[RMDB]
Structure probing data (DMS and 2A3) for a 177-nucleotide construct.
The 2A3 profile rests on 5,764 reads.
The reactions ran in a buffer of 150 mM KOAc, 10 mM MgCl2 and 150 mM bicine (pH 8.5), at 24 C.
As a SHAPE reagent, 2A3 marks flexible, mostly unpaired nucleotides at the ribose 2'-OH.
Reactivities are given for positions 27 through 126.
It was measured as part of the RMDB library M2PK90.
For DMS, 12,765 sequencing reads were counted.
For 2A3 the reverse transcriptase was SuperScript II with manganese.

RNA sequence: GGGAACGACUCGAGUAGAGUCGAAAAAGAGUACGGCCGCAAGGUUUCCGGUUGUGGAUGGCAGCGUGUGUGUCGCCCCGUCGUCUAGUGCUGGUUCUAGGCCUGGGGCGUCAGCAUCCAGGUAAAACUCAUUAGGAUGAUUCGUCAUCCUAAUGAGAAAAGAAACAACAACAACAAC
Reactivity to DMS in 0.01 (KOAc 150mM, MgCl2 10mM, bicine 150mM(pH8.5), 24C), signal-to-noise 6, nucleotides 027 to 126: a070g000a090g010u000a060c090g000g000c030c030g010c120a060a100g010g010u000u000u000c050c020g020g010u000u000g030u010g000g010a050u000g010g010c110a060g010c090g010u000g000u000g010u000g010u000c020g010c010c010c010c010g010u000c270g000u000c010u000a020g010u000g010c070u000g000g010u010u000c010u000a020g000g000c000c070u000g000g000g000g000c010g010u000c040a060g000c020a050u000c030c030a060g000g010u010a050a060a090a140
Reactivity to 2A3 in 0.01 (KOAc 150mM, MgCl2 10mM, bicine 150mM(pH8.5), 24C), signal-to-noise 3, nucleotides 027 to 126: a020g070a020g020u060a020c030g020g020c020c010g050c060a050a060g080g010u030u070u060c040c010g000g040u080u120g100u060g040g040a060u030g030g070c050a020g010c090g030u080g010u030g030u020g010u040c010g000c020c000c010c000g060u050c030g000u000c020u000a010g010u020g140c110u120g100g030u100u020c010u010a000g010g000c000c010u020g000g000g040g000c000g000u020c010a010g000c000a010u010c020c020a020g070g000u110a060a060a050a060